[RMDB]
Source: RMDB library M2RFPK, as collected in RNAgym. The record gives the reactivity of an RNA of 207 nucleotides to DMS and 2A3. 2A3 adducts were read by reverse transcription with SuperScript II with manganese. Values cover nucleotides 27 to 156. The reactions ran in a buffer of 150 mM KOAc, 10 mM MgCl2 and 150 mM bicine (pH 8.5), at 24 C.
RNA sequence: GGGAACGACUCGAGUAGAGUCGAAAAAGGGAAGAAAAUAAUUUAGAAAGGAGAUUCCGCCCCAGCCUGCGGUGCGGCCGAAAGGCUGUAAGGCAUCCCGGAGAGGGGAGGCAAGGCGAAAGCCAAAAACGGUACACCAUCUUCGGAUGGUGUACAACAUAAUGUUAUACUUCGGUAUAACAUUAUGAAAAGAAACAACAACAACAAC
Reactivity to DMS in 0.01 (KOAc 150mM, MgCl2 10mM, bicine 150mM(pH8.5), 24C), signal-to-noise 1, nucleotides 027 to 156: a110g000g020g010a100a090g020a060a130a080a120u010a140a110u030u010u000a160g010a100a110a130g020g000a140g010a160u010u000c020c020g000c010c000c020c000a100g020c010c030u000g010c060g000g020u000g010c040g000g040c010c010g000a100a120a170g050g050c000u000g020u000a030a060g030g000c050a070u010c000c000c040g000g000a100g010a120g040g000g000g000a030g000g050c140a030a110g030g000c030g000a080a030a230g020c000c010a020a030a050a140a150c080g000g000u000a010c000a020c010c000a010u000c010u000u010c220g030g020a020u000g000g000u000g040u000a000c000a030a050
Reactivity to 2A3 in 0.01 (KOAc 150mM, MgCl2 10mM, bicine 150mM(pH8.5), 24C), signal-to-noise 3, nucleotides 027 to 156: a020g090g030g020a040a040g070a060a110a030a060u210a170a140u200u230u210a090g050a080a060a030g030g030a100g030a070u070u000c040c010g000c000c010c000c010a000g020c000c010u030g010c040g030g040u070g030c060g110g040c040c020g040a100a050a000g010g000c010u020g010u040a010a030g060g000c010a020u020c020c020c020g020g010a070g020a030g010g010g030g000a000g000g000c040a020a050g000g000c010g020a050a000a010g000c010c010a110a020a000a010a000c110g050g000u000a010c000a000c000c000a000u000c000u000u020c140g070g000a000u000g000g000u000g010u000a000c000a000a000